[RMDB]
RNA sequence: GGGAACGACUCGAGUAGAGUCGAAAAGGUCGGCGGAGACCGUUCAUGCUCUGUGCUAGUUUGUUAGGAACAUUCAGCUUAUUCCUUAUGGGCUGGGCCCCUGAUAUUUGCCUCUUUAUAUUUAGCACAAAAUUACUACCUUCGGGUAGUAAUUUUGAAAAGAAACAACAACAACAAC
Reactivity to DMS in 0.01 (KOAc 150mM, MgCl2 10mM, bicine 150mM(pH8.5), 24C), signal-to-noise 4, nucleotides 027 to 126: g020g020u000c030g020g020c100g010g000a130g000a060c040c020g000u000u010c060a080u010g020c060u010c050u010g010u000g020c030u000a060g010u000u000u010g010u000u000a080g000g010a090a060c070a090u000u010c050a050g010c050u000u000a090u000u010c100c070u000u010a080u000g020g000g000c020u000g010g010g010c100c030c000c020u000g000a070u010a060u000u000u010g000c030c030u000c080u000u000u000a100u000a080u030u000u000a070g010c070a130
Reactivity to 2A3 in 0.01 (KOAc 150mM, MgCl2 10mM, bicine 150mM(pH8.5), 24C), signal-to-noise 2, nucleotides 027 to 126: g020g010u060c000g010g060c080g060g050a080g000a110c000c010g000u030u050c000a040u100g030c030u000c060u080g110u060g070c030u000a050g070u060u090u100g040u030u070a040g010g030a030a060c010a060u030u060c030a050g010c020u080u060a040u110u100c000c040u080u140a100u150g000g020g000c000u010g000g040g000c010c020c000c030u010g020a020u010a160u140u090u060g030c020c000u060c000u090u190u010a170u030a070u110u150u090a020g040c020a000
Chemical mapping of a 177-nucleotide RNA with DMS and 2A3. High DMS reactivity at an A or C suggests that its Watson-Crick edge is free. The data come from the RNA Mapping Database (RMDB), library OK2TST. Values cover nucleotides 27 to 126. Conditions: 150 mM KOAc, 10 mM MgCl2 and 150 mM bicine (pH 8.5), 24 C.